[RMDB]
RNA sequence: GGGAACGACUCGAGUAGAGUCGAAAAAUGCUUGCCAACCACCAACUGGACACAAGAUACUCCGUGGAAAGAGCACGUGCCUCGCUGGAUCUGCCGGGUAUCAAUCAUGCAGAGACGCUGCUCAGCCACUGCAUAGUUAUUUCGAUAACUAUGCAGUAAAAGAAACAACAACAACAAC
Reactivity to 2A3 in 0.01 (KOAc 150mM, MgCl2 10mM, bicine 150mM(pH8.5), 24C), signal-to-noise 9, nucleotides 027 to 126: a000u110g010c030u050u070g020c010c000a040a030c020c010a040c010c010a090a060c040u060g040g030a030c020a010c020a120a060g020a050u060a050c020u020c020c010g020u050g020g030a090a100a050g040a020g010c020a020c100g070u090g050c010c020u040c050g010c020u040g030g020a050u010c010u030g020c020c020g010g000g000u050a040u070c010a020a060u090c030a040u130g030c030a010g030a010g010a070c020g020c060u030g000c010u020c040a030g030c020c020
Reactivity to DMS in 0.01 (KOAc 150mM, MgCl2 10mM, bicine 150mM(pH8.5), 24C), signal-to-noise 9, nucleotides 027 to 126: a070u020g010c040u010u010g010c030c020a100a120c060c020a060c050c050a080a100c080u010g000g000a070c120a100c120a080a090g000a090u020a070c050u010c020c110g010u010g010g000a060a050a190g000a060g010c040a070c120g010u010g000c030c020u000c080g000c010u000g010g000a200u010c030u000g000c030c100g000g000g000u010a060u020c050a060a060u020c070a050u010g010c040a060g000a090g000a050c050g010c030u000g000c020u000c030a110g010c070c080

About this RNA:
Structure probing data (2A3 and DMS) for a 177-nucleotide construct. DMS adducts were read by reverse transcription with MarathonRT. For 2A3 the reverse transcriptase was SuperScript II with manganese. High 2A3 reactivity points to a flexible backbone, as in loops and unpaired stretches. The reactions ran in a buffer of 150 mM KOAc, 10 mM MgCl2 and 150 mM bicine (pH 8.5), at 24 C.